[RMDB]
RNA sequence: GGGAACGACUCGAGUAGAGUCGAAAAGGGGUCGAACGAAGUAGGCGUCAGACAUGAACUGAAGCCUCCACGGUUCAACAGCUGACGAACUACCUAUCAAGUUCGACGGAGGCACCCAAAAGGGUAAGUAUCCUUGUUCGCAAGGAUACUUACCCAAUCGUUGUAUAUGCUUCGGCAUAUACAACGAAAAAGAAACAACAACAACAAC
Reactivity to 2A3 in 0.01 (KOAc 150mM, MgCl2 10mM, bicine 150mM(pH8.5), 24C), signal-to-noise 4, nucleotides 027 to 156: g110g010g030g040u000c000g000a000a000c010g070a250a060g030u010a000g010g000c010g000u000c000a000g030a230c030a080u110g000a000a020c010u010g010a140a010g020c000c000u000c010c000a030c020g000g010u010u020c020a060a040c050a140g300c010u000g010a000c000g050a130a120c040u070a070c070c020u070a070u230c060a110a040g000u000u010c010g000a000c010g000g000a000g000g000c010a040c000c000c010a000a140a020a030g000g000g010u010a010a000g000u010a010u010c000c010u010u000g010u040u120c260g020c140a000a000g000g000a000u000a000c000u000u010a000c000c000c000a000a010
Reactivity to DMS in 0.01 (KOAc 150mM, MgCl2 10mM, bicine 150mM(pH8.5), 24C), signal-to-noise 2, nucleotides 027 to 156: g040g020g010g050u000c000g040a060a030c010g000a150a220g050u000a000g010g010c020g030u000c000a020g000a100c050a300u000g010a070a060c000u010g010a050a220g000c050c010u000c040c020a300c030g020g000u000u010c020a150a070c100a140g050c010u010g010a100c000g010a080a100c050u010a100c020c050u000a050u000c030a060a300g000u000u000c040g020a000c020g000g030a030g030g050c000a050c000c000c000a030a070a080a150g000g000g000u000a000a020g040u010a010u000c000c000u000u010g020u020u000c300g020c010a010a020g020g000a020u000a010c020u020u000a000c010c010c010a000a000